The record gives the reactivity of an RNA of 177 nucleotides to DMS and 2A3. High DMS reactivity at an A or C suggests that its Watson-Crick edge is free. It was measured as part of the RMDB library OK1LIB. The reactions ran in a buffer of 150 mM KOAc, 10 mM MgCl2 and 150 mM bicine (pH 8.5), at 24 C.
RNA sequence: GGGAACGACUCGAGUAGAGUCGAAAAGAAAACCGGCUAGACCGUGAUAGUUAAAUGGUCAGAACGGGCGCUUGUCGCGUGCCUGGUCGGGGUUCAAUUCCCCGCCGCUAUCAAACAGCCGGAAAAAGACUGGGUAAUGAUUCGUCAUUACCCAGUCAAAAGAAACAACAACAACAAC
Reactivity to DMS in 0.01 (KOAc 150mM, MgCl2 10mM, bicine 150mM(pH8.5), 24C), signal-to-noise 3, nucleotides 027 to 126: g000a130a050a120a070c000c020g020g000c000u000a070g000a060c120c080g050u040g010a000u010a000g000u000u020a030a060a070u010g020g000u010c160a100g010a200a040c120g020g000g020c010g000c010u010u050g010u020c110g010c050g000u020g000c000c000u000g010g030u030c020g010g010g000g030u000u000c190a130a300u020u010c000c000c000c000g000c080c030g000c000u000a000u000c010a050a180a080c170a130g000c030c010g000g000a030a080a030a070a110
Reactivity to 2A3 in 0.01 (KOAc 150mM, MgCl2 10mM, bicine 150mM(pH8.5), 24C), signal-to-noise 4, nucleotides 027 to 126: g070a000a100a000a020c010c000g010g000c010u050a010g070a080c030c080g150u030g000a000u000a010g020u050u110a100a190a080u160g040g060u150c080a040g050a110a010c030g000g020g000c010g020c050u230u300g160u300c060g010c010g090u090g130c010c000u020g000g060u180c030g000g020g000g000u000u030c020a030a020u060u060c000c000c000c000g010c000c000g000c000u000a000u000c000a000a000a100c010a030g000c000c000g010g000a100a000a000a000a000